RNA sequence: GGGAACGACUCGAGUAGAGUCGAAAAAUUGCCCACUCUUUGCAGGAGGCAGUUAUGAGACGUGAAGAUGAGUAUCUUGUAAAGAGGGAUAGGAGAAUUGGAGGGCAAGUUUGGUGCCAGCAGCCGCAGACCCACAUAGGUUCGCCUAUGUGGGUCUAAAAGAAACAACAACAACAAC
Reactivity to 2A3 in 0.01 (KOAc 150mM, MgCl2 10mM, bicine 150mM(pH8.5), 24C), signal-to-noise 2, nucleotides 027 to 126: a000u030u060g100c000c070c000a000c000u000c000u000u080u130g000c010a000g010g030a000g070g030c070a000g060u110u060a140u260g180a100g020a080c080g000u060g080a030a200g010a180u080g090a000g120u080a030u070c000u000u030g040u090a020a020a020g000a120g030g000g000a050u090a030g000g100a090g080a260a000u120u180g090g030a070g000g050g000c010a000a000g000u000u080u070g010g020u030g030c020c030a100g000c000a090g000c020c040g040c040
Reactivity to DMS in 0.01 (KOAc 150mM, MgCl2 10mM, bicine 150mM(pH8.5), 24C), signal-to-noise 2, nucleotides 027 to 126: a080u010u000g010c000c000c030a220c060u000c010u010u010u010g030c030a020g010g000a040g000g020c060a140g000u010u010a070u030g000a160g000a050c100g000u020g000a100a100g010a070u010g040a150g020u020a070u030c000u000u000g010u000a020a050a010g000a050g000g010g000a120u010a120g030g010a100g020a120a040u010u010g000g010a100g020g000g000c020a060a020g000u010u010u030g030g010u000g000c040c000a070g000c030a140g000c000c050g020c190
An RNA of 177 nucleotides, treated with 2A3 and DMS and read out base by base. Source: RMDB libraries RFM100 and RFMREP, as collected in RNAgym. Conditions: 150 mM KOAc, 10 mM MgCl2 and 150 mM bicine (pH 8.5), 24 C. For DMS the reverse transcriptase was MarathonRT. 2A3 is a SHAPE reagent: it acylates the 2'-hydroxyl of flexible nucleotides of all four kinds.